The record gives the reactivity of an RNA of 207 nucleotides to 2A3. Conditions: 150 mM KOAc, 10 mM MgCl2 and 150 mM bicine (pH 8.5), 24 C. It was measured as part of the RMDB library ARCHII.
[RMDB]
RNA sequence: GGGAACGACUCGAGUAGAGUCGAAAAGUAAAACAGCAACAAAAAUAACUGUAAACAACACAGAUUACGCUCCAGCUUACGCUAAAGCUGCGUGAGUUAAUCUCCUUUUGGAGCUGGACUGAUUAGAAUUUCUAGCGUUUUAAUCGCUCCAUAACCUACACACGACUAAGUUCGCUUAGUCGUGUGUAAAAGAAACAACAACAACAAC
Reactivity to 2A3 in 0.01 (KOAc 150mM, MgCl2 10mM, bicine 150mM(pH8.5), 24C), signal-to-noise 3, nucleotides 027 to 156: g060u080a030a070a020a030c040a010g070c040a010a060c080a080a190a060a070a060u160a050a070c030u050g030u140a080a080a080c100a070a010c050a030c010a050g020a070u070u140a040c080g000c000u000c000c000a000g000c000u010u020a000c010g010c050u090a150a080a210g120c170u080g000c070g000u020g010a010g010u020u050a010a010u070c060u080c040c000u000u060u120u090g000g000a000g010c020u030g000g010a010c030u070g000a010u010u020a010g010a050a010u070u120u130c090u150a050g070c040g060u000u000u000u010a010a010u010c000g010c040u000c030c000a080u050a170a140c000c020u000